This 177-nucleotide RNA was probed chemically with 2A3 and DMS.
Values cover nucleotides 27 to 126.
2A3 adducts were read by reverse transcription with SuperScript II with manganese.
RNA sequence: GGGAACGACUCGAGUAGAGUCGAAAAGCAUGGUCCCAGCCUCCUCGCUGGCGCCGGCUGGGCAACAUUCCGAGGGGACCGUCCCCCUCGGUAAUGGCGAAUGGGACCCAGAUCUCUCUCUAGCUUCGAAGAUUGUUAACUUCGGUUAACAAUCUUCAAAAGAAACAACAACAACAAC
Reactivity to 2A3 in 0.01 (KOAc 150mM, MgCl2 10mM, bicine 150mM(pH8.5), 24C), signal-to-noise 1, nucleotides 027 to 126: g070c060a060u090g030g000u060c000c000c000a000g000c000c000u040c010c010u030c020g040c060u070g070g060c060g050c020c030g020g010c000u010g000g000g010c020a040a020c000a030u060u000c000c000g000a010g000g010g000g010a040c060c060g090u130c010c000c010c010c000u000c000g000g000u000a010a010u040g020g000c040g080a110a080u060g010g000g030a030c000c000c000a040g000a100u040c030u020c010u000c020u000c040u060a030g070c000u110u060c080
Reactivity to DMS in 0.01 (KOAc 150mM, MgCl2 10mM, bicine 150mM(pH8.5), 24C), signal-to-noise 2, nucleotides 027 to 126: g010c070a060u000g010g000u000c140c010c010a100g000c020c040u000c030c040u000c180g030c050u000g010g010c270g020c020c030g000g020c030u010g010g000g020c070a100a140c020a050u000u000c020c000g010a020g010g010g020g000a090c150c250g000u000c080c000c000c010c000u000c000g000g000u010a000a030u000g010g000c100g000a110a110u030g000g000g010a100c030c020c050a100g010a100u000c040u020c020u000c010u000c040u000a110g000c100u000u000c270